Chemical mapping of a 207-nucleotide RNA with 2A3. It was measured as part of the RMDB library RNAMAK. For 2A3, 1,588 sequencing reads were counted. 2A3 adducts were read by reverse transcription with SuperScript II with manganese. The RNA was probed in 150 mM KOAc, 10 mM MgCl2 and 150 mM bicine (pH 8.5) at 24 C.
[RMDB]
RNA sequence: GGGAACGACUCGAGUAGAGUCGAAAACAUGCGACGUUCGCGUCGCAUGAAAAAAGAUAUGGAACGUCAUACUGCGACGAUCGACAUAUCGGAAACGAUAUAAGUCGGGAGCAGUGACGUUCCUAAGUCAAAAAAACAGAUGAUUCGUCAUCUGUAAUAGAUUUAUGCACUUCGGUGCAUAAAUCUAAAAAGAAACAACAACAACAAC
Reactivity to 2A3 in 0.01 (KOAc 150mM, MgCl2 10mM, bicine 150mM(pH8.5), 24C), signal-to-noise 1, nucleotides 027 to 156: c010a000u000g020c000g000a010c000g040u020u120c300g000c040g100u010c010g000c000a000u000g000a000a010a000a000a000a010g010a000u020a000u020g000g010a000a000c000g000u010c030a060u070a300c050u040g000c000g190a300c000g000a220u010c000g000a000c000a000u000a000u000c000g000g000a000a000a000c010g000a000u000a000u020a070a170g010u000c010g000g000g010a010g000c000a000g030u010g000a000c010g000u000u010c000c000u000a000a000g000u000c020a090a090a000a000a040a000a000c020a020g020a000u000g010a020u020u170c180g070u010c130a010u000c000u000g000u020a010a030